[RMDB]
Annotation
Structure probing data (2A3) for a 207-nucleotide construct. The RNA was probed in 150 mM KOAc, 10 mM MgCl2 and 150 mM bicine (pH 8.5) at 24 C. 2A3 adducts were read by reverse transcription with SuperScript II with manganese.

RNA sequence: GGGAACGACUCGAGUAGAGUCGAAAAGCAACGCAAAGCCGCGGCAAGUGGAGUUAGCGAGAAGAGACUAGGCUUUGGUUUCUUCAAGUGAAGCGGUCACCAAUCAGGUGUGGUGGUUACCGUAAAAAUAACCGCUCUUUGUUCGCAAAGAGCGGAAUCACCAGCCAAAGUUCGCUUUGGCUGGUGAAAAAGAAACAACAACAACAAC
Reactivity to 2A3 in 0.01 (KOAc 150mM, MgCl2 10mM, bicine 150mM(pH8.5), 24C), signal-to-noise 1, nucleotides 027 to 156: g000c010a020a030c050g030c130a120a030a000g010c040c010g050c060g080g020c060a090a100g070u090g080g130a110g060u160u190a010g100c020g010a020g030a040a000g000a010g010a000c020u020a000g040g100c050u060u030u090g030g000u000u000u000c000u020u020c060a080a030g040u030g080a110a050g000c020g000g030u030c020a000c010c010a040a170u200c020a070g000g120u050g030u070g130g070u040g010g010u010u020a010c000c000g000u050a010a000a000a000a230u070a090a090c000c000g000c010u020c000u010u000u010g090u050u050c210g000c120a000a000a000g000a000g000c000g000g030a000a000